[RMDB]
RNA sequence: GGGAACGACUCGAGUAGAGUCGAAAACACACACCACACACACCACAUGCACCACACCACACAGGUUACAUGCACACAACACACACAUGCCACGUGCACACACCCCACACACCACAUGUAUGUGCCAUAAAGAGAUGAGCUUCGGCUCAUCUCUUUAAAAAGAAACAACAACAACAAC
Reactivity to DMS in 0.01 (KOAc 150mM, MgCl2 10mM, bicine 150mM(pH8.5), 24C), signal-to-noise 1, nucleotides 027 to 126: c050a110c120a010c120a100c010c020a010c060a100c060a060c080a070c040c040a050c030a090u010g030c080a100c060c050a000c110a060c000c070a060c070a010c090a020g000g060u060u000a060c110a050u020g000c040a030c060a070c050a050a000c060a040c000a010c000a000c070a080u000g000c010c040a060c260g010u000g060c030a010c000a060c050a100c040c000c040c040a050c030a060c030a000c060c020a020c110a020u000g000u000a060u000g030u000g040c030c060a080